[RMDB]
RNA sequence: GGGAACGACUCGAGUAGAGUCGAAAAUACGCUAAGUUCGCUUAGCGUAAAAUAUAUGGGACUAUAUAAAACCUGAUAGCCGUAGAAGAUCUUGUAUCGGCAAAAUCACCAUCUUCGGAUGGUGAAACGGUAAUACUUACUUCGGUAAGUAUUACCGAAAAGAAACAACAACAACAAC
Reactivity to 2A3 in 0.01 (KOAc 150mM, MgCl2 10mM, bicine 150mM(pH8.5), 24C), signal-to-noise 3, nucleotides 027 to 126: u030a000c010g000c000u010a000a010g010u020u060c140g030c140u000u000a010g000c000g000u000a000a000a000a000u080a000u010a040u030g030g010g070a040c070u010a020u030a030u050a220a130a040a030c010c010u030g060a120u090a070g000c020c030g030u020a020g040a250a050g040a180u060c030u100u190g040u090a060u090c000g000g020c030a020a000a000a090u020c010a000c000c000a000u000c010u030u050c180g120g000a000u000g000g010u010g010a020a010a000
Reactivity to DMS in 0.01 (KOAc 150mM, MgCl2 10mM, bicine 150mM(pH8.5), 24C), signal-to-noise 4, nucleotides 027 to 126: u000a010c010g000c000u000a000a010g010u000u010c230g030c000u000u000a000g010c000g010u000a000a010a080a040u000a040u000a050u000g010g010g000a160c100u000a040u000a060u010a080a110a080a130c020c000u000g000a170u010a130g010c000c000g000u000a100g000a070a120g000a030u010c080u000u000g000u000a110u000c010g010g020c050a040a050a070a120u010c000a000c000c000a000u000c000u000u010c170g010g020a010u010g000g010u000g000a010a040a060